The record gives the reactivity of an RNA of 177 nucleotides to 2A3 and DMS. Conditions: 150 mM KOAc, 10 mM MgCl2 and 150 mM bicine (pH 8.5), 24 C. For 2A3 the reverse transcriptase was SuperScript II with manganese. DMS adducts were read by reverse transcription with MarathonRT.
RNA sequence: GGGAACGACUCGAGUAGAGUCGAAAAGAUAUGGAGAGUAGACCCUUUCUUUAGAGCGUUGAAAUCGGAAACGAUGGAGCUCUUGAGAAAGCUACUCUCCUAAGUCAAAGCGGUCUUCGGACCGCAACGAUAGAGUAGCGUUCGCGCUACUCUAUCGAAAAGAAACAACAACAACAAC
Reactivity to 2A3 in 0.01 (KOAc 150mM, MgCl2 10mM, bicine 150mM(pH8.5), 24C), signal-to-noise 2, nucleotides 027 to 126: g050a020u060a040u180g010g010a010g010a000g010u040a050g080a230c040c030c060u020u020u010c010u010u010u010a000g000a000g000c020g200u300u060g040a040a020a000u000c000g010g060a050a040a040c000g010a010u010g000g000a010g030c000u000c000u000u030g010a020g000a000a010a010g000c000u000a000c010u010c000u020c010c000u010a000a000g010u010c030a060a080a050g000c000g000g000u000c000u050u140c300g120g020a010c000c000g000c000a000a000
Reactivity to DMS in 0.01 (KOAc 150mM, MgCl2 10mM, bicine 150mM(pH8.5), 24C), signal-to-noise 2, nucleotides 027 to 126: g010a060u000a300u010g010g000a010g000a010g000u000a010g000a160c220c270c070u000u000u010c000u000u010u000a010g020a010g010c000g000u010u010g000a070a150a020u000c010g010g000a100a090a170c010g010a020u000g010g000a110g010c000u000c000u000u000g000a010g000a030a010a030g000c000u000a000c000u000c000u000c000c000u000a000a070g000u000c060a080a130a160g010c000g000g000u000c000u010u010c240g040g000a000c000c000g010c000a010a000